[RMDB]
RNA sequence: GGGAACGACUCGAGUAGAGUCGAAAAGGUCGUCUUUUCGAAGACGACCACUGUCGAUCCCAAAACUUUUCGAAACAUGUCGAAAGACAUGCUGAAACAGAAUUGGUGUGUGUUUCGACACACACAAGAUCUCACAUUGAUUCGUCAAUGUGAGAUCAAAAGAAACAACAACAACAAC
Reactivity to DMS in 0.01 (KOAc 150mM, MgCl2 10mM, bicine 150mM(pH8.5), 24C), signal-to-noise 5, nucleotides 027 to 126: g000g010u000c010g010u000c000u000u000u000u010c170g000a020a000g000a010c000g010a020c000c000a010c070u020g010u000c060g010a100u010c000c000c010a120a070a090a170c100u000u000u010u000c020g000a160a090a110c010a010u000g010u000c000g010a130a100a180g000a000c020a010u000g010c030u010g020a080a050a060c250a080g000a100a070u000u000g010g020u000g000u000g010u010g000u000u000u010c140g020a040c000a090c000a010c000a010c010a060a090
Reactivity to 2A3 in 0.01 (KOAc 150mM, MgCl2 10mM, bicine 150mM(pH8.5), 24C), signal-to-noise 8, nucleotides 027 to 126: g000g000u000c000g000u000c000u030u050u030u110c210g100a010a000g000a000c000g000a000c000c000a000c010u020g030u020c020g020a070u030c010c000c000a020a030a050a080c070u070u060u040u050c040g050a070a060a030c010a000u000g000u000c000g040a080a020a020g000a000c000a000u010g000c020u060g050a060a040a020c110a070g140a180a170u170u180g100g000u010g000u000g000u000g010u010u070u100c150g020a000c000a000c000a000c000a000c000a010a010